[RMDB]
Source information: Conditions: 150 mM KOAc, 10 mM MgCl2 and 150 mM bicine (pH 8.5), 24 C. An RNA of 177 nucleotides, treated with 2A3 and DMS and read out base by base. For DMS, 19,232 sequencing reads were counted. It was measured as part of the RMDB library OK2TST. DMS adducts were read by reverse transcription with MarathonRT.
RNA sequence: GGGAACGACUCGAGUAGAGUCGAAAAUAGGUACAAUGUUAACUAACCUGUUGAAAAGCACCCAAGAACGAAUAUGGCAGGAUCCACCUGUUUUUAAACUGCAUGAUGAGACAGGAAAAGUACAAGGAUCUAUGUAUCUAUUCGUAGAUACAUAGAUAAAAGAAACAACAACAACAAC
Reactivity to 2A3 in 0.01 (KOAc 150mM, MgCl2 10mM, bicine 150mM(pH8.5), 24C), signal-to-noise 7, nucleotides 027 to 126: u070a020g020g020u070a050c060a080a150u150g050u210u130a090a020c030u020a020a070c010c010u010g010u030u020g030a050a060a030a040g010c010a040c000c030c020a020a030g060a070a020c070g020a110a070u120a070u140g020g000c010a010g040g010a040u050c020c010a040c050c020u010g030u010u010u000u010u100a080a090a030c030u050g020c040a050u060g040a040u050g010a070g000a020c010a000g010g000a060a100a000a010g040u030a010c030a050a050g110g010
Reactivity to DMS in 0.01 (KOAc 150mM, MgCl2 10mM, bicine 150mM(pH8.5), 24C), signal-to-noise 9, nucleotides 027 to 126: u000a050g010g010u000a070c120a120a080u010g010u010u010a080a090c100u010a110a170c010c010u000g010u000u000g000a080a100a100a110g010c090a070c050c040c070a080a080g000a070a070c120g000a070a080u000a060u000g010g000c020a040g010g000a110u010c140c130a100c030c010u000g000u000u000u000u010u010a030a070a130c130u000g010c070a060u010g010a090u000g000a190g000a020c010a010g000g010a040a050a060a090g010u000a040c100a090a110g000g010